[RMDB]
RNA sequence: GGGAACGACUCGAGUAGAGUCGAAAACCAUAACAGUUCGCUGUUAUGGACUGUCGGAAUGCGGAAUAAUUAAUCGUCCGCUUACGAUUAAUACCGACUAAAAAGCGUAACACUUCGGUGUUACGAAGCGUACAGAUCAGUUCGCUGAUCUGUACGCAAAAGAAACAACAACAACAAC
Reactivity to 2A3 in 0.01 (KOAc 150mM, MgCl2 10mM, bicine 150mM(pH8.5), 24C), signal-to-noise 3, nucleotides 027 to 126: c000c010a000u000a010a000c000a000g020u040u110c160g060c070u010g010u010u000a000u000g000g040a050c040u030g020u000c010g010g020a100a040u100g000c010g000g080a020a020u110a090a100u120u120a060a060u140c080g000u010c070c000g020c010u010u070a010c010g000a000u010u010a010a010u040a060c010c010g030a020c120u110a070a060a120a100a010g120c000g020u000a000a010c000a010c010u010u100c190g070g000u000g000u010u000a000c010g000a020a040
Reactivity to DMS in 0.01 (KOAc 150mM, MgCl2 10mM, bicine 150mM(pH8.5), 24C), signal-to-noise 2, nucleotides 027 to 126: c000c000a000u010a000a010c000a010g020u010u020c180g020c010u030g000u020u000a020u000g010g000a090c120u000g010u010c000g020g000a130a070u000g020c000g020g020a040a030u010a070a100u010u000a080a080u000c150g020u000c060c120g000c090u000u000a050c070g000a030u000u000a050a030u000a300c010c000g000a030c070u020a050a040a110a070a060g000c010g000u000a010a000c000a020c000u010u000c210g060g010u000g010u000u000a000c000g000a050a000